[RMDB]
RNA sequence: GGGAACGACUCGAGUAGAGUCGAAAAAGGGUGGCGAUGAGCCAUUGUUCAGGCCGGCUAAUGCUGCGCAUACCGCGCUGGUGUUUGUCACAGAGCAGUGCUCUCAGACCUGCUACUGUACCCUUUUAUGCUCAUGACAAUUCGUUGUCAUGAGCAUAAAAGAAACAACAACAACAAC
Reactivity to 2A3 in 0.01 (KOAc 150mM, MgCl2 10mM, bicine 150mM(pH8.5), 24C), signal-to-noise 1, nucleotides 027 to 126: a060g020g000g000u000g040g000c060g030a160u120g000a050g040c060c000a050u000u080g030u040u010c040a030g100g100c100c010g000g000c000u030a030a030u000g040c000u030g000c000g050c020a050u240a300c090c140g020c000g010c070u070g030g030u000g000u000u070u020g010u000c000a000c040a040g000a000g000c000a000g000u000g050c040u070c000u040c130a000g000a300c000c000u010g100c000u120a240c000u050g000u000a000c010c000c000u010u000u000u040